Background
Structure probing data (DMS and 2A3) for a 177-nucleotide construct.
RNA sequence: GGGAACGACUCGAGUAGAGUCGAAAAAGCAGGAAGGAAAGAAAAGCAUAUUUGAAAGAGACCCAAGCAGGCACUGUGGAGGUCAAGCUCCCUGUUUAACCUUGAUCCUAAGACUUUAUAUGCUGGCGAGACAUAACUUCUUCGGAAGUUAUGUCUCAAAAGAAACAACAACAACAAC
Reactivity to DMS in 0.01 (KOAc 150mM, MgCl2 10mM, bicine 150mM(pH8.5), 24C), signal-to-noise 2, nucleotides 027 to 126: a030g010c020a050g010g020a100a040g000g000a040a070a090g040a100a030a080a100g030c020a040u010a030u000u010u000g000a050a120a050g000a250g000a070c020c020c020a160a160g010c070a090g040g040c090a090c080u000g020u020g000g010a150g000g020u000c150a060a110g000c030u000c000c000c000u000g000u010u000u000a060a080c050c040u000u010g030a120u020c020c000u010a030a100g010a120c080u000u000u010a060u000a040u020g000c030u000g010g020c280
Reactivity to 2A3 in 0.01 (KOAc 150mM, MgCl2 10mM, bicine 150mM(pH8.5), 24C), signal-to-noise 2, nucleotides 027 to 126: a000g000c020a010g050g020a050a030g000g040a210a050a010g020a060a210a060a000g030c010a070u080a110u110u130u160g090a110a080a000g060a010g000a000c000c000c010a010a000g000c020a010g190g130c120a040c200u080g000u040g000g140a120g000g000u050c010a000a010g030c000u000c000c010c000u010g040u030u040u020a020a010c000c010u020u070g020a030u090c010c010u060a090a040g040a040c000u200u200u080a180u040a070u160g050c040u020g020g040c020
The 2A3 profile rests on 1,116 reads. It was measured as part of the RMDB library OK2TST.